[RMDB]
RNA sequence: GGGAACGACUCGAGUAGAGUCGAAAAAACGCCAACUGUGUGUACCACAUUCGCACACUUCAACUCACUGCGUAUCGCAAGCUCAACCGCUACGCAGAGCUGCGACGUGCCUACUACGAAUUAGGCAAGGAGCAUGCUCAUUCGUGAGCAUGCUCCUAAAAGAAACAACAACAACAAC
Reactivity to 2A3 in 0.01 (KOAc 150mM, MgCl2 10mM, bicine 150mM(pH8.5), 24C), signal-to-noise 8, nucleotides 027 to 126: a000a000c120g050c060c000a080a080c100u060g010u000g000u010g020u100a080c000c070a110c080a180u090u130c060g020c010a000c000a000c000u090u110c080a100a090c030u050c110a060c050u070g010c000g030u080a040u060c010g010c060a080a080g020c040u020c070a040a090c050c040g060c110u120a050c070g030c070a030g000a020g000c020u040g010c020g040a050c000g060u040g010c000c000u030a050c000u040a070c080g120a170a120u040u020a040g000g020c010a010
Reactivity to DMS in 0.01 (KOAc 150mM, MgCl2 10mM, bicine 150mM(pH8.5), 24C), signal-to-noise 3, nucleotides 027 to 126: a020a020c130g000c000c010a100a070c060u000g000u000g010u000g000u010a110c130c080a030c090a020u020u000c030g010c040a090c000a020c120u000u010c080a070a190c060u020c070a130c050u000g020c040g020u000a030u000c020g000c030a050a070g080c040u040c060a120a130c140c030g020c010u000a040c040g010c030a030g000a060g010c150u010g000c040g000a090c140g010u000g000c020c010u000a020c100u060a130c170g000a090a060u010u020a020g000g000c000a140
Source information: Chemical mapping of a 177-nucleotide RNA with 2A3 and DMS. For 2A3 the reverse transcriptase was SuperScript II with manganese. The RNA was probed in 150 mM KOAc, 10 mM MgCl2 and 150 mM bicine (pH 8.5) at 24 C. The DMS profile rests on 3,960 reads. For DMS the reverse transcriptase was MarathonRT.